[RMDB]
RNA sequence: GGGAACGACUCGAGUAGAGUCGAAAAGAUAUGGAGACCUGUGAGAGGUACCUCGUACGUCGGAAACGAUUGAAAGGUACUACCCACCUCACUGGUCUCCUAAGUCAAAGAGAGGUUCGCCUCUCAACUGAAGAAUGAACUUCGGUUCAUUCUUCAGAAAAGAAACAACAACAACAAC
Reactivity to DMS in 0.01 (KOAc 150mM, MgCl2 10mM, bicine 150mM(pH8.5), 24C), signal-to-noise 2, nucleotides 027 to 126: g000a070u000a300u000g020g000a020g000a010c000c000u000g010u020g000a000g000a160g050g000u000a000c010c000u010c050g000u000a240c300g030u010c010g000g000a100a030a110c010g030a000u000u000g010a260a040a010g010g000u000a010c000u000a040c040c040c110a300c140c000u000c000a000c010u000g010g030u000c000u000c000c000u000a000a120g000u000c000a090a090a080g010a000g010a010g010g010u000u020c300g040c020c000u000c000u000c010a040a080
Reactivity to 2A3 in 0.01 (KOAc 150mM, MgCl2 10mM, bicine 150mM(pH8.5), 24C), signal-to-noise 2, nucleotides 027 to 126: g010a010u040a010u090g000g000a000g010a000c000c030u020g010u000g000a000g000a000g100g000u000a000c000c010u020c070g080u210a210c200g030u020c000g000g000a030a030a010c040g010a020u030u300g230a300a300a000g000g010u030a000c000u040a030c050c080c010a040c000c000u000c010a000c000u000g000g010u000c010u000c000c000u000a010a000g020u020c000a030a230a000g000a000g000a010g000g050u120u160c250g170c040c000u000c000u000c030a000a010